[RMDB]
RNA sequence: GGGAACGACUCGAGUAGAGUCGAAAAGAUAUGGAUGAAAGACUUCGAUAAGCUGUUGGGAUCGGAAACGAUCCCACCAGCUUUUGACGAAGGGGAGUCCUAAGUCGAAUGUGGCUUCGGCCACAAACUCAUUUAUUUGUUUCGACAAAUAAAUGAGAAAAGAAACAACAACAACAAC
Reactivity to 2A3 in 0.01 (KOAc 150mM, MgCl2 10mM, bicine 150mM(pH8.5), 24C), signal-to-noise 4, nucleotides 027 to 126: g010a030u070a040u170g010g010a010u030g090a110a160a060g210a140c010u000u000c020g040a060u020a080a000g000c000u010g020u020u000g000g000g000a000u020c010g030g030a080a050a020c010g000a000u010c010c000c000a000c000c000a000g060c000u000u000u010u010g040a010c000g000a000a000g010g000g020g030a060g040u000c020c000u070a160a060g030u030c030g050a200a180u150g010u000g010g000c010u060u050c300g130g000c000c000a010c000a010a020a000
Reactivity to DMS in 0.01 (KOAc 150mM, MgCl2 10mM, bicine 150mM(pH8.5), 24C), signal-to-noise 8, nucleotides 027 to 126: g010a030u000a300u010g000g010a010u000g000a220a130a160g000a120c000u000u000c000g020a150u010a020a010g010c000u000g010u000u000g000g010g010a010u000c000g000g000a080a080a140c010g000a010u000c000c000c000a000c020c000a000g000c010u000u000u000u000g000a160c130g010a010a020g010g000g000g020a300g000u000c000c000u010a060a180g010u000c020g010a120a110u000g020u000g000g010c000u000u010c200g020g000c000c010a000c010a010a040a160